An RNA of 177 nucleotides, treated with DMS and 2A3 and read out base by base. For 2A3 the reverse transcriptase was SuperScript II with manganese. Reactivities are rounded to 0.1 and cut off at 0 and 3. Source: RMDB library OK2TRN, as collected in RNAgym. High 2A3 reactivity points to a flexible backbone, as in loops and unpaired stretches.

[RMDB]
RNA sequence: GGGAACGACUCGAGUAGAGUCGAAAAGAGCAGCUAAGAGAUGGCUCCAGACACCCCAGGUCCCAUCAAGAAGACAGAGCUGGUCAUGGGCACUCUGCAGACAGCUCCAGACAAUCAGGCACUCGUCCCUUCCUUAGGGAUUCGUCCCUAAGGAAGGAAAAGAAACAACAACAACAAC
Reactivity to DMS in 0.01 (KOAc 150mM, MgCl2 10mM, bicine 150mM(pH8.5), 24C), signal-to-noise 3, nucleotides 027 to 126: g000a060g020c010a060g000c050u000a090a080g000a170g010a120u020g020g000c030u000c000c030a050g000a120c200a110c040c010c030c020a090g010g000u000c040c000c000a070u000c160a110a150g000a120a050g010a050c080a060g000a070g040c080u000g010g010u000c020a090u000g000g000g010c090a060c090u000c020u010g010c120a070g010a070c060a040g000c020u010c010c060a040g000a060c080a040a090u010c100a040g000g000c070a040c060u000c090g000u000c080
Reactivity to 2A3 in 0.01 (KOAc 150mM, MgCl2 10mM, bicine 150mM(pH8.5), 24C), signal-to-noise 2, nucleotides 027 to 126: g020a020g000c030a000g000c040u100a150a030g030a050g020a240u100g030g000c010u000c030c000a010g070a090c040a090c030c000c000c000a000g030g010u030c030c010c000a040u080c030a040a150g110a100a000g020a050c060a010g010a010g020c020u040g030g050u030c030a090u060g010g000g000c010a010c040u170c030u080g000c000a020g020a080c020a020g010c010u000c030c020a040g040a030c030a000a120u120c030a010g070g030c050a010c060u030c010g100u120c010